[RMDB]
Record summary
An RNA of 177 nucleotides, treated with DMS and read out base by base. The DMS profile rests on 8,444 reads.
RNA sequence: GGGAACGACUCGAGUAGAGUCGAAAAGAUAUGGAAAUUGUGUUAACCCAGAGCUGACGGGAGCUACAGUCGGAAACGACUGAAUAGCAUCGAUCGUCGCUCUGGGUUAACACAAUUUCCUAAGUCACAUAGUUGAGUAGUUCGCUACUCAACUAUGAAAAGAAACAACAACAACAAC
Reactivity to DMS in 0.01 (KOAc 150mM, MgCl2 10mM, bicine 150mM(pH8.5), 24C), signal-to-noise 4, nucleotides 027 to 126: g020a040u010a300u010g000g000a010a020a010u000u000g020u000g000u000u000a000a000c000c000c000a010g000a020g030c000u020g040a010c000g010g000g000a060g020c000u000a040c000a010g000u010c000g000g000a130a110a220c000g010a010c000u000g000a110a120u000a020g010c000a260u010c190g010a080u000c000g010u000c010g000c000u000c000u000g000g000g000u000u000a000a000c010a000c000a000a000u000u000u000c010c000u000a010a070g000u000c040a270